[RMDB]
RNA sequence: GGGAACGACUCGAGUAGAGUCGAAAAAUCUUUAAGCAGAUGGCAGGUUCACCCCGUACGGUGCGGAUGUUCGCGCUUCCGUGAAACGCGAAAAUCGGACGGUGGCUGCAAGUCGCAUCGCAAAACCUAUAGCUUGUUAGGUUCGCCUAACAAGCAACACAAACUACCACUUCGGUGGUAGUUUGUGAAAAGAAACAACAACAACAAC
Reactivity to 2A3 in 0.01 (KOAc 150mM, MgCl2 10mM, bicine 150mM(pH8.5), 24C), signal-to-noise 2, nucleotides 027 to 156: a000u040c030u050u120u080a060a050g040c050a040g040a090u040g060g050c050a010g020g090u120u130c000a060c000c000c000c000g020u050a040c020g000g080u020g040c000g030g070a060u110g010u100u080c050g010c000g000c080u030u020c020c010g060u030g120a120a120a010c050g010c000g050a020a000a040a110u090c000g000g010a000c020g040g000u030g010g070c100u100g010c060a040a030g040u050c020g000c030a010u000c010g000c030a030a050a050a080c010c030u080a060u100a200g000c000u000u000g000u000u010a000g010g020u040u060c220g050c080c000u000a000a000c000a010a000g000c000a000a000